Source: RMDB library OK1LIB, as collected in RNAgym. Structure probing data (2A3 and DMS) for a 177-nucleotide construct. High DMS reactivity at an A or C suggests that its Watson-Crick edge is free.
RNA sequence: GGGAACGACUCGAGUAGAGUCGAAAAGAAUAUAAGAGCGUUUUCGCGUCUUGACGUGAAUGAGCCUAGACUGUAGGAUCUAGUGGGAUAGUAACGCUCACUCACAAAACGCUAUUCCACAGGAAGAAUAGUAAAUGGCAUUCGUGCCAUUUACUAUAAAAGAAACAACAACAACAAC
Reactivity to 2A3 in 0.01 (KOAc 150mM, MgCl2 10mM, bicine 150mM(pH8.5), 24C), signal-to-noise 8, nucleotides 027 to 126: g060a060a060u190a030u100a190a050g000a010g000c000g010u000u010u040u060c010g000c020g000u010c080u110u210g100a020c000g010u010g010a040a060u110g020a040g020c000c010u080a120g080a300c120u160g080u170a020g050g060a060u070c010u020a040g010u010g010g000g010a000u010a020g020u040a030a020c020g010c010u020c000a030c010u070c010a060c040a020a090a040a020c060g010c010u000a010u000u000c000c000a000c000a020g070g060a070a090g040a120
Reactivity to DMS in 0.01 (KOAc 150mM, MgCl2 10mM, bicine 150mM(pH8.5), 24C), signal-to-noise 7, nucleotides 027 to 126: g010a100a080u030a050u040a090a140g000a040g020c000g010u000u000u010u000c020g000c000g010u010c070u020u010g010a040c010g010u010g000a030a040u030g010a100g000c010c030u010a030g020a130c170u030g010u030a050g000g010a090u010c060u000a060g020u000g000g000g000a010u000a010g010u000a080a030c050g020c010u000c020a090c120u020c110a090c160a040a040a090a110c160g000c000u000a000u000u000c010c000a020c020a220g000g020a110a100g010a140